Conditions: 150 mM KOAc, 10 mM MgCl2 and 150 mM bicine (pH 8.5), 24 C. An RNA of 177 nucleotides, treated with DMS and 2A3 and read out base by base. The 2A3 profile rests on 1,580 reads. The DMS profile rests on 3,354 reads.

[RMDB]
RNA sequence: GGGAACGACUCGAGUAGAGUCGAAAAGAGAGCUGCUUCGGCAGCUCUCCGUCAGGUAGUUCCUAUGUCAAUUACCUGUAGUGGCCAACGUCCGGAUAGGAAGAGAGCCCUGCUUCGGCAGGGCUAAAGAAACGAGAUGAUUCGUCAUCUCGUUUCUAAAAGAAACAACAACAACAAC
Reactivity to DMS in 0.01 (KOAc 150mM, MgCl2 10mM, bicine 150mM(pH8.5), 24C), signal-to-noise 3, nucleotides 027 to 126: g000a010g000a020g010c020u000g010c000u000u020c220g020g020c000a010g010c000u000c000u000c000c020g000u010c020a010g000g000u000a040g010u000u000c050c180u020a070u000g020u000c120a050a040u020u000a010c000c010u000g000u000a080g050u010g010g020c010c030a100a100c180g000u000c030c030g000g020a110u000a100g010g000a120a120g000a140g000a060g000c000c000c000u000g010c010u000u000c180g010g000c000a000g000g010g000c000u000a000a030
Reactivity to 2A3 in 0.01 (KOAc 150mM, MgCl2 10mM, bicine 150mM(pH8.5), 24C), signal-to-noise 2, nucleotides 027 to 126: g000a000g010a000g010c040u010g020c030u070u070c230g120g010c000a000g020c000u000c010u000c000c010g030u000c000a010g020g000u030a000g000u040u030c010c070u140a170u180g150u090c050a050a030u030u010a020c000c000u040g030u120a120g070u110g110g040c030c050a070a030c070g050u000c030c020g060g050a100u090a090g020g050a040a040g090a010g020a000g050c000c020c010u010g020c000u020u050c110g080g040c000a000g000g000g000c010u010a000a000